[RMDB]
RNA sequence: GGGAACGACUCGAGUAGAGUCGAAAACGAUAAGCAUUCGUGCUUAUCGACGGUACGAAAGUAGAAAGGAGCAAAAGCAUCGGCUCCUAAAAACGAUGCAAAAGACAACGGGGUUCGCCCCGUUGAACAAUAAGCCAACCUUCGGGUUGGCUUAUUGAAAAGAAACAACAACAACAAC
Reactivity to 2A3 in 0.01 (KOAc 150mM, MgCl2 10mM, bicine 150mM(pH8.5), 24C), signal-to-noise 1, nucleotides 027 to 126: c020g000a000u000a010a000g000c000a000u010u140c210g100u040g010c000u000u000a000u000c010g000a000c050g060g040u060a020c050g070a180a040a020g040u090a060g150a130a210a120g000g010a010g000c020a060a220a110a000g030c010a020u020c010g030g020c010u000c010c000u020a000a000a000a000a030c010g000a010u010g030c030a050a100a000a000g060a020c000a010a000c010g000g030g040g000u040u080c190g150c000c000c000c000g000u000u000g000a000a000
Reactivity to DMS in 0.01 (KOAc 150mM, MgCl2 10mM, bicine 150mM(pH8.5), 24C), signal-to-noise 2, nucleotides 027 to 126: c020g000a010u000a000a010g010c000a060u010u010c200g050u000g000c020u000u000a010u000c010g020a100c110g040g000u010a010c010g010a130a110a180g000u000a010g010a150a170a160g030g000a000g000c000a070a060a120a170g020c010a010u000c000g040g000c030u000c000c010u020a000a000a000a050a070c010g020a010u020g000c060a110a060a120a070g010a170c010a000a000c000g000g010g000g010u000u010c290g020c020c000c000c020g000u000u010g000a030a140
Chemical mapping of a 177-nucleotide RNA with 2A3 and DMS. Source: RMDB library M2PK50, as collected in RNAgym. For 2A3 the reverse transcriptase was SuperScript II with manganese. High 2A3 reactivity points to a flexible backbone, as in loops and unpaired stretches. The RNA was probed in 150 mM KOAc, 10 mM MgCl2 and 150 mM bicine (pH 8.5) at 24 C. In probing experiments dimethyl sulfate is read out at A N1 and C N3, which are open when not base-paired.